[RMDB]
RNA sequence: GGGAACGACUCGAGUAGAGUCGAAAAAACAUGAUAUUAUUGCUGCGAUAUUUUAUGUAUCAAACUGGUGGUAUAUAGCAAAAGAUGUUAAUUAUUUUGAGCAAUUUUCAUUUAUGCCAUUAAAGCACCCUACCUAUUAGUUCGCUAAUAGGUAGGGAAAAGAAACAACAACAACAAC
Reactivity to DMS in 0.01 (KOAc 150mM, MgCl2 10mM, bicine 150mM(pH8.5), 24C), signal-to-noise 4, nucleotides 027 to 126: a070a040c070a040u010g010a050u010a040u010u020a050u000u000g010c030u010g020c140g010a040u010a020u010u020u030u030a040u010g000u010a050u020c070a080a070a080c150u010g000g010u000g000g000u000a010u000a010u000a080g020c080a040a020a030a030g000a120u000g010u010u020a030a010u030u000a110u000u020u020u020g020a170g000c070a040a070u000u010u010u020c040a100u020u010u010a030u010g000c000c020a020u010u010a020a070a080g010c160a100
Reactivity to 2A3 in 0.01 (KOAc 150mM, MgCl2 10mM, bicine 150mM(pH8.5), 24C), signal-to-noise 9, nucleotides 027 to 126: a000a010c110a060u110g030a040u060a040u150u080a070u060u110g030c020u040g030c040g030a020u000a050u040u140u080u030a100u180g050u010a080u070c070a090a100a120c080u110g040g000u020g010g030u050a040u010a010u020a030g060c070a000a010a040a060g080a080u060g040u090u070a060a050u120u120a150u090u170u100u140g080a030g030c000a020a030u020u020u030u030c030a040u000u040u150a030u060g010c010c020a030u090u120a100a070a030g020c020a040